[RMDB]
RNA sequence: GGGAACGACUCGAGUAGAGUCGAAAACAGUACUCAUUCGUUUUAUACCUCUGAAUCAAUAUCAACCUGGUGGUGAGCAAUGGUUUCAACCAUGUACCGGAUGUGUUCUGCCAUGCGCUCCUGAAACGCUACUUACUAACUUCGGUUAGUAAGUAGCAAAAGAAACAACAACAACAAC
Reactivity to 2A3 in 0.01 (KOAc 150mM, MgCl2 10mM, bicine 150mM(pH8.5), 24C), signal-to-noise 5, nucleotides 027 to 126: c010a000g040u060a040c010u020c040a030u060u030c020g030u000u010u080u160a140u060a050c010c010u040c030u060g070a060a060u080c060a080a060u070a040u210c030a040a100c000c030u050g060g000u050g010g030u060g050a020g010c050a060a050u040g010g060u040u180u160c070a080a060c010c000a020u050g010u050a050c030c020g010g010a020u050g040u000g020u060u000c010u020g000c000c010a030u080g010c040g020c030u020c000c000u060g020a080a040a010c050
Reactivity to DMS in 0.01 (KOAc 150mM, MgCl2 10mM, bicine 150mM(pH8.5), 24C), signal-to-noise 5, nucleotides 027 to 126: c030a100g010u010a040c040u010c030a060u010u010c050g020u000u000u010u000a080u000a090c070c030u000c050u000g010a080a090u000c110a080a090u000a100u010c100a050a080c090c040u000g010g040u010g000g010u000g010a100g010c110a100a060u000g010g010u010u020u010c140a070a070c020c010a020u000g010u000a100c140c060g000g010a060u000g010u010g020u000u000c050u000g010c030c030a060u000g000c120g030c050u000c000c030u000g000a090a080a090c240
An RNA of 177 nucleotides, treated with 2A3 and DMS and read out base by base. The data come from the RNA Mapping Database (RMDB), library OK2TST. Conditions: 150 mM KOAc, 10 mM MgCl2 and 150 mM bicine (pH 8.5), 24 C. For DMS the reverse transcriptase was MarathonRT.